[RMDB]
RNA sequence: GGGAACGACUCGAGUAGAGUCGAAAAGAUAUGGACCAUGUCACGCAAGGUACGGUAGCGGAGCAGGUAUCGGAAACGAUACCCUGCGCGAAACGCUACCGUACCUUGCGUGGCGUGGUCCUAAGUCCCUUAUGAUUAGGUUCGCCUAAUCAUAAGGAAAAGAAACAACAACAACAAC
Reactivity to DMS in 0.01 (KOAc 150mM, MgCl2 10mM, bicine 150mM(pH8.5), 24C), signal-to-noise 3, nucleotides 027 to 126: g000a120u010a300u010g010g000a010c010c000a000u000g000u000c000a000c000g010c000a020a020g000g000u000a000c000g010g020u000a000g020c000g000g020a270g010c010a020g000g010u000a000u010c000g010g010a160a110a230c020g000a020u000a010c180c060c030u000g000c000g000c210g010a110a110a190c010g000c000u000a010c000c000g000u000a000c000c000u000u000g000c000g030u000g000g000c000g030u000g000g010u000c000c000u000a010a110g010u000c040
Chemical mapping of a 177-nucleotide RNA with DMS. Reactivities are given for positions 27 through 126. For DMS the reverse transcriptase was MarathonRT.